[RMDB]
RNA sequence: GGGAACGACUCGAGUAGAGUCGAAAAGAUAUGGACCUUGUUCCGGUGAUGACCUCGGAAACGAGCAAGCCGAGACACUGGGUCCUAAGUCAAAACGAUACCGAUGAGUUCGCUCAUCGGUAUCGAACUGUCUCCUGUGGUUCGCCACAGGAGACAGAAAAGAAACAACAACAACAAC
Reactivity to 2A3 in 0.01 (KOAc 150mM, MgCl2 10mM, bicine 150mM(pH8.5), 24C), signal-to-noise 1, nucleotides 027 to 126: g020a020u040a050u140g000g000a000c000c010u010u030g030u050u010c010c020g010g040u040g050a300u190g060a080c050c000u000c010g010g060a110a000a050c010g010a040g000c020a050a080g000c020c000g190a190g040a140c140a030c090u100g040g000g000u000c000c000u000a080a010g000u010c070a000a000a100a240c010g000a000u010a000c000c010g040a020u000g000a000g150u080u290c300g030c100u050c010a000u000c000g000g000u000a000u000c000g000a000a000
Reactivity to DMS in 0.01 (KOAc 150mM, MgCl2 10mM, bicine 150mM(pH8.5), 24C), signal-to-noise 1, nucleotides 027 to 126: g000a010u010a300u030g000g020a020c000c000u000u010g000u000u000c030c000g000g030u000g030a100u010g010a090c300c000u000c020g000g000a080a090a200c000g000a010g010c010a090a200g000c000c000g010a030g030a020c050a070c300u000g040g020g020u010c000c000u000a020a070g000u000c020a070a100a060a140c020g000a000u000a000c000c000g020a010u000g000a000g000u000u010c220g020c000u000c000a000u000c000g000g000u000a000u000c010g030a010a040